[RMDB]
RNA sequence: GGGAACGACUCGAGUAGAGUCGAAAACGUAGGGACUUCGGUCCCUACGAAAAAAGAUAUGGAGUGGCUGGACAUGAAGAUGACCACUCGGAAACGAGUGGUCCCUUCAACAGCCAGCACUCCUAAGUCAAAAAAGCGAUAGAUUCGUCUAUCGCAAUCCCCGAUAAAGGUUCGCCUUUAUCGGGGAAAAAGAAACAACAACAACAAC
Reactivity to 2A3 in 0.01 (KOAc 150mM, MgCl2 10mM, bicine 150mM(pH8.5), 24C), signal-to-noise 1, nucleotides 027 to 156: c030g000u080a010g000g030g000a000c010u070u080c300g040g010u000c010c000c000u000a000c000g000a000a000a000a000a010a000g030a010u030a010u170g010g000a050g010u050g180g090c000u030g000g030a030c020a230u140g010a000a070g030a100u080g020a020c000c010a000c000u020c010g000g000a030a010a000c030g000a000g000u000g000g010u000c000c000c000u000u010c000a030a010c060a010g080c000c000a000g000c030a000c000u000c000c000u000a050a000g010u020c000a000a010a010a010a100a110g050c010g080a010u290a000g010a020u200u000c220g070u040c060u000a000u040c120g060c000a010a020
Structure probing data (2A3) for a 207-nucleotide construct. Values cover nucleotides 27 to 156. It was measured as part of the RMDB library RNAMAK.